[RMDB]
RNA sequence: GGGAACGACUCGAGUAGAGUCGAAAAGCGAGCCUUGAUGCGAAAUCGCGAACUGGAGUUGCAAGCUGUUGAACCGAAUGAAUUGAUCGAAAACGUGAUACAACUUAUCCACCGUGAGACGAAGCGAACAAUACGCAGUAUUCGUACUGCGUAUUGUAAAAGAAACAACAACAACAAC
Reactivity to 2A3 in 0.01 (KOAc 150mM, MgCl2 10mM, bicine 150mM(pH8.5), 24C), signal-to-noise 8, nucleotides 027 to 126: g040c030g030a010g010c000c030u080u110g080a070u130g020c020g060a060a030a050u090c010g000c020g030a040a010c050u060g030g040a040g040u080u070g050c040a050a030g000c020u040g020u080u060g040a060a050c030c040g030a040a050u110g050a060a120u140u140g050a070u100c050g030a040a020a040a080c040g040u060g020a010u030a120c030a060a020c040u070u090a040u050c020c010a040c030c040g020u040g030a030g020a020c050g020a040a010g040c020g020a020
Reactivity to DMS in 0.01 (KOAc 150mM, MgCl2 10mM, bicine 150mM(pH8.5), 24C), signal-to-noise 9, nucleotides 027 to 126: g010c050g010a100g020c030c030u000u000g010a100u000g020c060g010a060a100a090u000c050g010c030g010a070a090c090u010g000g000a090g010u000u000g010c060a070a120g020c020u000g010u000u000g010a120a110c120c040g000a060a080u010g010a090a120u000u010g010a080u000c040g000a060a060a080a080c130g010u000g010a080u000a060c100a060a060c100u010u000a070u000c030c030a070c080c040g010u000g000a090g000a090c080g010a080a100g010c080g010a100

This 177-nucleotide RNA was probed chemically with 2A3 and DMS. 2A3 adducts were read by reverse transcription with SuperScript II with manganese. Source: RMDB library OK2TRN, as collected in RNAgym. The DMS profile rests on 24,883 reads. The RNA was probed in 150 mM KOAc, 10 mM MgCl2 and 150 mM bicine (pH 8.5) at 24 C. Reactivities are given for positions 27 through 126.